Chemical mapping of a 177-nucleotide RNA with 2A3 and DMS. For DMS the reverse transcriptase was MarathonRT. Reactivities are rounded to 0.1 and cut off at 0 and 3. The data come from the RNA Mapping Database (RMDB), libraries RFM100 and RFMREP. For 2A3 the reverse transcriptase was SuperScript II with manganese. Reactivities are given for positions 27 through 126.
RNA sequence: GGGAACGACUCGAGUAGAGUCGAAAAUGAAACGAGUUGGGCACUGUCUCAACCAGGCGCUCAGUGAAAUUGUAGUGGCGGUGAAGAUGCCGCCUACCCGCAGAAGGACGGAAAGACCCUAUAGACCAUUACUACGCUUGUUCGCAAGCGUAGUAAUAAAAGAAACAACAACAACAAC
Reactivity to 2A3 in 0.01 (KOAc 150mM, MgCl2 10mM, bicine 150mM(pH8.5), 24C), signal-to-noise 8, nucleotides 027 to 126: u150g030a020a020a030c090g030a020g070u060u010g020g000g000c040a040c140u060g040u070c040u020c120a040a050c020c000a020g050g000c090g000c040u010c020a040g020u040g120a070a090a130u130u120g070u090a110g060u040g060g000c020g020g020u050g060a150a140g110a130u250g030c000c000g000c000c000u020a050c000c000c010g000c010a020g030a160a030g060g020a020c030g020g030a060a030a000g080a040c010c000c020u080a090u080a100g050a020c040c010
Reactivity to DMS in 0.01 (KOAc 150mM, MgCl2 10mM, bicine 150mM(pH8.5), 24C), signal-to-noise 7, nucleotides 027 to 126: u010g010a070a100a060c110g010a180g010u010u010g000g010g020c010a110c070u010g000u020c080u030c160a080a110c200c020a050g000g000c130g010c000u000c010a030g020u010g010a080a090a110u010u010g010u020a080g010u010g000g020c000g000g010u000g010a140a140g020a160u030g010c010c000g010c010c010u000a000c030c030c020g020c080a070g030a130a080g020g000a070c040g000g000a050a100a080g000a100c020c010c010u000a090u030a090g000a120c140c090